[RMDB]
Overview: The record gives the reactivity of an RNA of 207 nucleotides to 2A3 and DMS. It was measured as part of the RMDB library OK3TST. Reactivities are given for positions 27 through 156. The DMS profile rests on 1,277 reads. Conditions: 150 mM KOAc, 10 mM MgCl2 and 150 mM bicine (pH 8.5), 24 C. The 2A3 profile rests on 801 reads.

RNA sequence: GGGAACGACUCGAGUAGAGUCGAAAAUGUUUGCAACUAAGCUUGUUAACACUAUAUAAUGAAAAUGUGCAAAGAAUAAUGUUGCAGUUUUCGGUUAGAUUUAAGUCAAAGAUAUUCAUUAAUAAGGAAUCUUCGAACGUGAAUAUUCCAGAAAUUAGCAUGAUUUACUGUUCGCAGUAAAUCAUGCAAAAGAAACAACAACAACAAC
Reactivity to 2A3 in 0.01 (KOAc 150mM, MgCl2 10mM, bicine 150mM(pH8.5), 24C), signal-to-noise 2, nucleotides 027 to 156: u080g050u000u020u160g000c010a020a000c030u170a140a000g100c040u040u060g000u100u110a100a020c000a000c010u100a150u150a170u090a250a210u160g120a060a030a020a020u120g040u000g070c010a010a030a060g090a160a160u160a220a030u270g000u070u010g010c000a000g010u000u000u000u070c020g000g050u010u140a020g020a170u050u040u280a050a060g050u050c100a060a050a020g030a000u060a060u120u050c020a010u070u140a030a190u060a190a050g000g010a060a080u040c020u060u040c100g020a060a020c030g000u050g000a010a020u010a020u000u060c000c000a000g100a100a060a090u100u140a020
Reactivity to DMS in 0.01 (KOAc 150mM, MgCl2 10mM, bicine 150mM(pH8.5), 24C), signal-to-noise 1, nucleotides 027 to 156: u010g050u000u010u000g020c010a070a010c040u000a260a250g020c070u010u060g000u000u000a070a070c010a050c030u000a300u020a230u010a190a100u000g000a060a070a010a110u050g010u000g000c000a050a070a130g000a100a120u000a050a130u000g010u000u000g010c010a110g040u000u000u000u000c000g040g000u000u000a020g000a180u000u000u000a100a060g000u000c040a110a110a130g010a020u000a080u000u000c000a060u010u030a090a140u020a010a120g020g020a010a240u000c020u000u000c050g050a090a140c110g040u020g000a050a000u000a050u000u000c020c020a140g000a110a050a050u000u000a180